An RNA of 177 nucleotides, treated with DMS and 2A3 and read out base by base. 2A3 adducts were read by reverse transcription with SuperScript II with manganese. Conditions: 150 mM KOAc, 10 mM MgCl2 and 150 mM bicine (pH 8.5), 24 C. For DMS the reverse transcriptase was MarathonRT.

RNA sequence: GGGAACGACUCGAGUAGAGUCGAAAACAUGUGCUGCUGUUGCCGUUGAGUCAUGGCUAGGACUUCGCUUCACCAUUGUCGUUUUGAUCACAGUCUUAAGGCGGCUGGGCGUGGUCGGACGCGCUGCCGCAUACUAUCCCUUCGGGGAUAGUAUGCGAAAAGAAACAACAACAACAAC
Reactivity to DMS in 0.01 (KOAc 150mM, MgCl2 10mM, bicine 150mM(pH8.5), 24C), signal-to-noise 9, nucleotides 027 to 126: c090a090u010g010u000g010c030u000g010c030u000g010u000u000g010c020c030g010u000u000g010a100g010u000c060a060u000g010g010c050u000a110g010g010a070c060u000u000c080g010c050u000u000c060a100c060c050a110u010u000g010u010c030g010u000u000u000u010g010a050u000c060a070c110a100g010u000c050u000u010a070a110g010g010c040g010g010c030u000g000g000g010c030g020u000g010g010u000c050g000g000a080c050g010c050g010c070u000g010c110
Reactivity to 2A3 in 0.01 (KOAc 150mM, MgCl2 10mM, bicine 150mM(pH8.5), 24C), signal-to-noise 9, nucleotides 027 to 126: c040a050u120g050u080g070c020u020g000c020u040g060u190u090g040c020c030g050u040u100g060a030g050u060c040a060u080g050g000c040u050a070g020g050a040c000u050u020c080g020c040u100u090c050a090c080c010a100u050u170g070u090c040g040u020u030u070u180g040a040u080c040a020c040a150g060u020c030u080u120a080a030g060g010c020g010g000c030u050g010g020g000c020g010u010g000g020u020c030g020g020a030c020g030c010g010c030u040g050c020